[RMDB]
An RNA of 177 nucleotides, treated with 2A3 and DMS and read out base by base. The 2A3 profile rests on 1,066 reads. The reactions ran in a buffer of 150 mM KOAc, 10 mM MgCl2 and 150 mM bicine (pH 8.5), at 24 C. For DMS the reverse transcriptase was MarathonRT.
RNA sequence: GGGAACGACUCGAGUAGAGUCGAAAAGUGAUGCUCUUGGGGUCCAUUGUUUACGGUUGAUAGAAGCCAGUUUUGUCAUUUUGAUGAAAUUUCAUCCUAUCCUUAGUUCCAAAACCGCUCCAAUGACGCAGUAAAACGGGUUCGCCCGUUUUACUGCAAAAGAAACAACAACAACAAC
Reactivity to 2A3 in 0.01 (KOAc 150mM, MgCl2 10mM, bicine 150mM(pH8.5), 24C), signal-to-noise 2, nucleotides 027 to 126: g120u070g030a010u110g010c010u040c000u100u110g000g000g020g120u010c020c020a040u040u130g080u110u170u060a030c040g000g020u020u060g050a010u010a090g110a060a000g020c000c080a020g000u030u000u010u040g090u000c080a150u000u070u180u240g000a000u030g010a000a060a000u110u100u030c040a030u010c030c000u000a020u030c000c000u130u120a030g050u060u010c010c000a020a020a020a010c090c020g010c000u020c030c020a020a070u110g000a040c090
Reactivity to DMS in 0.01 (KOAc 150mM, MgCl2 10mM, bicine 150mM(pH8.5), 24C), signal-to-noise 2, nucleotides 027 to 126: g000u030g000a100u030g000c080u000c040u000u040g040g010g010g020u000c040c020a140u000u000g000u050u000u000a120c030g000g020u000u000g010a100u020a040g010a090a110g000c110c160a050g020u000u020u000u040g000u020c030a150u000u020u010u010g000a060u000g050a020a060a070u010u000u000c080a100u000c010c040u010a140u040c000c040u000u020a210g040u000u000c020c070a110a100a100a070c040c110g000c040u020c020c020a020a050u010g000a110c100